[RMDB]
RNA sequence: GGGAACGACUCGAGUAGAGUCGAAAAUUGUUCUGUCCGGAAGACAGCUUAUACUGAUAUCUAUGGUAAUUUAAAGUAAGGCUGAUUAUAUAACACGAUUUUUGUGAACUUGUCAUCGCUAUGAUGACCCGUCAAAAAUUUUCGAAUUUUUGACGGGAAAAGAAACAACAACAACAAC
Reactivity to 2A3 in 0.01 (KOAc 150mM, MgCl2 10mM, bicine 150mM(pH8.5), 24C), signal-to-noise 5, nucleotides 027 to 126: u100u080g020u050u030c010u030g080u010c010c000g070g030a010a000g050a000c030a000g010c030u060u120a170u000a230c020u010g040a040u050a100u170c080u080a180u210g070g060u200a180a120u070u040u090a150a130a010g010u010a000a010g000g000c010u000g040a040u190u040a060u000a060u070a110a000c000a000c060g050a070u040u010u000u120u140g050u020g050a110a110c020u020u060g010u000c000a000u010c020g090c170u170a080u300g010a000u010g000a020
Reactivity to DMS in 0.01 (KOAc 150mM, MgCl2 10mM, bicine 150mM(pH8.5), 24C), signal-to-noise 3, nucleotides 027 to 126: u030u010g000u010u000c010u000g000u000c020c000g010g000a120a040g000a110c000a020g010c030u000u000a140u000a000c010u000g000a100u000a020u010c070u040a120u030g020g000u020a060a110u020u030u000a090a160a020g000u000a020a060g000g000c000u000g000a140u010u000a140u030a080u030a060a090c120a020c090g000a130u000u030u000u010u000g000u010g020a140a070c090u010u010g010u010c000a000u000c000g040c260u050a100u050g000a020u000g000a030
The data come from the RNA Mapping Database (RMDB), libraries RFM100 and RFMREP. Chemical mapping of a 177-nucleotide RNA with 2A3 and DMS. The RNA was probed in 150 mM KOAc, 10 mM MgCl2 and 150 mM bicine (pH 8.5) at 24 C.